Conditions: 150 mM KOAc, 10 mM MgCl2 and 150 mM bicine (pH 8.5), 24 C. An RNA of 177 nucleotides, treated with 2A3 and DMS and read out base by base. The 2A3 profile rests on 2,000 reads. 2A3 adducts were read by reverse transcription with SuperScript II with manganese.

[RMDB]
RNA sequence: GGGAACGACUCGAGUAGAGUCGAAAACAAGGCGUGAGUCCCGCGGACAUGUACCGGUGGAAGCUCUCGUCCCACGAGCCCUGCAGUGCCACCUGCACCACAGGUACUGGUCACGGGUGCCAAGGGGCCUCGCGUACAAAUUCGUUUGUACGCGAGGAAAAGAAACAACAACAACAAC
Reactivity to 2A3 in 0.01 (KOAc 150mM, MgCl2 10mM, bicine 150mM(pH8.5), 24C), signal-to-noise 1, nucleotides 027 to 126: c030a030a110g080g020c020g020u160g140a090g170u130c000c010c000g000c090g010g000a010c010a030u150g000u050a010c000c030g050g030u020g000g050a170a060g030c000u000c000u020c100g080u050c010c020c000a000c000g000a010g010c000c040c060u030g020c010a050g010u120g300c030c030a120c050c000u010g000c000a010c000c010a000c000a050g020g010u000a000c020u070g050g010u000c020a010c030g000g000g000u030g000c030c010a050a020g000g000g050g000
Reactivity to DMS in 0.01 (KOAc 150mM, MgCl2 10mM, bicine 150mM(pH8.5), 24C), signal-to-noise 2, nucleotides 027 to 126: c150a090a210g020g000c030g060u000g010a140g010u000c010c000c020g000c060g020g000a020c030a070u020g000u000a020c020c000g000g060u000g000g000a170a140g000c020u000c010u000c060g010u000c000c020c020a160c260g000a010g050c020c150c150u000g030c030a010g000u000g000c080c100a050c190c010u010g000c010a300c040c010a000c040a010g000g000u000a000c020u000g000g020u010c010a050c020g000g000g000u000g010c010c000a120a120g000g000g010g000